[RMDB]
RNA sequence: GGGAACGACUCGAGUAGAGUCGAAAAGAAAGAAAAAAAGAAAUCUGACAGAAUGACGGAUUCGAUCGUUGUGGUCGGCGGGCCACCACGUCAUUCCUUCGCACUGUCUCCGGGCAGACCGCCAUAAAAAAGCGGAUCUACUUCGGUAGAUCCGCAAGUCAUUCAUUGAGUUCGCUCAAUGAAUGACAAAAGAAACAACAACAACAAC
Reactivity to 2A3 in 0.01 (KOAc 150mM, MgCl2 10mM, bicine 150mM(pH8.5), 24C), signal-to-noise 3, nucleotides 027 to 156: g030a020a060a010g050a030a100a000a000a020a020a040g090a030a150a040u070c080u100g020a030c040a030g090a110a230u120g010a030c030g000g010a010u060u090c060g030a080u270c060g000u020u040g000u010g010g000u010c020g030g090c070g020g010g000c000c010a000c020c010a000c000g020u020c020a030u030u050c000c010u040u060c050g030c050a060c030u000g000u010c020u010c070c040g000g010g000c000a020g030a150c020c030g040c030c010a100u290a030a150a020a020a000a010g000c000g000g000a000u000c010u000a000c000u010u030c130g050g000u000a000g020a000u000c000c010g010c000a000a000